[RMDB]
RNA sequence: GGGAACGACUCGAGUAGAGUCGAAAAUCACCACAUAUUCACCGUAGGAAUAGACGUAGAUACCCGAGCAUACUUUACAUCUGCUACAAUAAUCAUUGCUAUUCCCACUGGAGUAAAAGUAUUUAGUUGAUUAGCUACCCUGCACGGCGGCAAUAUUUAACAGGUUGUAGUUCGCUACAACCUGUUAAAAAGAAACAACAACAACAAC
Reactivity to 2A3 in 0.01 (KOAc 150mM, MgCl2 10mM, bicine 150mM(pH8.5), 24C), signal-to-noise 1, nucleotides 027 to 156: u140c000a070c040c020a050c000a090u060a050u030u200c110a090c060c020g000u000a020g000g000a000a000u000a010g100a100c050g040u040a060g010a000u030a000c030c000c140g000a000g040c100a070u100a170c020u230u300u230a140c070a130u080c070u110g060c000u080a210c090a080a130u060a180a030u010c050a060u020u130g000c040u060a000u000u000c000c000c000a020c030u080g030g000a040g040u150a000a140a000a060g060u030a010u120u130u120a010g060u020u090g020a190u050u040a000g000c000u020a080c080c040c000u040g140c110a010c040g090g000c010g000g000c010a020a010u060a030u110u000
The record gives the reactivity of an RNA of 207 nucleotides to 2A3. The reactions ran in a buffer of 150 mM KOAc, 10 mM MgCl2 and 150 mM bicine (pH 8.5), at 24 C. 2A3 adducts were read by reverse transcription with SuperScript II with manganese. It was measured as part of the RMDB library PDB130.